[RMDB]
RNA sequence: GGGAACGACUCGAGUAGAGUCGAAAAGUACUCAUGAGUGGUUUGGACUAUGAGCGAGCAGUUUUAAGUGCAGGACCUUUAGGCAUUAUGGAUGCUUGUUUAGAUGUAGUAAUUCCAUACUUGCAUAUAAAAUGCAGCGAUUCGUCGCUGCAUUUUAAAAAGAAACAACAACAACAAC
Reactivity to DMS in 0.01 (KOAc 150mM, MgCl2 10mM, bicine 150mM(pH8.5), 24C), signal-to-noise 2, nucleotides 027 to 126: g010u010a090c040u000c030a050u010g000a060g020u010g010g020u000u000u000g020g020a060c090u010a070u010g000a090g020c060g000a060g020c040a040g000u000u000u020u020a050a130g000u010g000c050a060g030g010a110c090c040u000u000u020a080g020g010c010a030u010u010a060u000g000g020a050u000g010c060u000u000g020u000u000u000a080g000a090u010g000u000a030g010u000a060a150u000u010c020c020a060u010a040c120u000u000g000c050a050u000a140
This 177-nucleotide RNA was probed chemically with DMS. For DMS, 1,896 sequencing reads were counted. High DMS reactivity at an A or C suggests that its Watson-Crick edge is free.